[RMDB]
RNA sequence: GGGAACGACUCGAGUAGAGUCGAAAAAAGAUAUGGACCAACGGGAGGGAGGAACCUCGUUGAAACGAACUCGGAAACGAGUUCGUGGAGAGGUUACCCUCCCGAAGAACGUUGGUCCUAAGUCAAACUUUUAACCUUUGUUCGCAAAGGUUAAAAGAAAAGAAACAACAACAACAAC
Reactivity to DMS in 0.01 (KOAc 150mM, MgCl2 10mM, bicine 150mM(pH8.5), 24C), signal-to-noise 4, nucleotides 027 to 126: a100a080g010a050u010a300u010g010g010a000c000c000a000a010c010g010g010g000a060g020g000g000a040g000g010a060a010c000c000u000c000g010u000u000g000a130a140a010c000g020a020a010c000u000c000g000g000a110a080a180c010g020a010g010u000u000c000g010u000g000g000a040g000a010g000g010u000u000a070c300c000c000u000c000c010c000g000a020a050g000a120a160c010g000u000u000g010g000u000c000c000u000a000a070g000u000c020a100a110a200
Chemical mapping of a 177-nucleotide RNA with DMS.